[RMDB]
Notes
Structure probing data (2A3 and DMS) for a 177-nucleotide construct. In probing experiments dimethyl sulfate is read out at A N1 and C N3, which are open when not base-paired. Source: RMDB libraries RFM100 and RFMREP, as collected in RNAgym. Reactivities are given for positions 27 through 126.
RNA sequence: GGGAACGACUCGAGUAGAGUCGAAAAUAGUUCCAGCAGUAAAAGAUGCCGACAUGCUCAUUGGACACAGUGGGCAGGGAGAAAUCUUAAGAGUUCGGGCUCUGGGGAUAGUAUGCUCGCAAGGGUGGCUUACUGCUAAGUUCGCUUAGCAGUAAGCAAAAGAAACAACAACAACAAC
Reactivity to 2A3 in 0.01 (KOAc 150mM, MgCl2 10mM, bicine 150mM(pH8.5), 24C), signal-to-noise 4, nucleotides 027 to 126: u130a010g050u040u000c010c010a010g070c020a010g070u120a000a070a050a000g050a020u060g040c010c010g070a080c050a100u040g010c000u000c010a010u010u010g060g010a070c090a010c020a250g030u010g000g010g010c010a010g000g020g010a060g040a030a080a010u020c020u040u060a070a030g060a040g070u060u140c020g030g030g000c040u020c050u040g050g000g000g000a020u020a030g120u070a080u170g010c010u010c000g020c050a030a060g070g030g020u070g040
Reactivity to DMS in 0.01 (KOAc 150mM, MgCl2 10mM, bicine 150mM(pH8.5), 24C), signal-to-noise 6, nucleotides 027 to 126: u040a140g010u000u000c000c010a120g000c150a090g000u030a070a070a070a020g000a050u010g000c300c010g000a170c060a050u010g000c000u010c010a020u010u000g010g020a190c300a120c030a020g050u000g000g010g030c010a020g010g000g000a170g010a040a190a030u000c020u000u000a090a090g000a040g000u000u010c110g000g010g010c010u000c020u000g000g000g000g010a070u030a060g000u030a060u020g000c000u000c010g000c140a050a100g000g010g010u010g000